[RMDB]
RNA sequence: GGGAACGACUCGAGUAGAGUCGAAAACUGCAUUAGAUUUUCUUCUAAUUCUUCUUUCAAAGAAUCAUCUUCGUCAAGCAUCUCAAGUAAGAGUUCUGUUUCGUCAGAUAAUUCUUGCAUAUUAUGGGACGACCGACCUAUUCGUAGGUCGGUCGUCAAAAGAAACAACAACAACAAC
Reactivity to 2A3 in 0.01 (KOAc 150mM, MgCl2 10mM, bicine 150mM(pH8.5), 24C), signal-to-noise 1, nucleotides 027 to 126: c040u010g000c000a000u000u000a040g010a000u000u050u150u110c020u100u000c000u010a000a190u170u000c000u170u000c010u000u220u080c060a120a030a000g050a030a030u020c010a030u050c030u230u100c070g000u000c000a010a010g000c000a200u030c020u010c140a060a230g000u200a040a160g020a010g050u110u000c100u000g120u040u170u080c050g000u060c030a000g000a000u050a100a000u040u000c000u040u010g000c070a000u170a000u280u190a030u300g140g110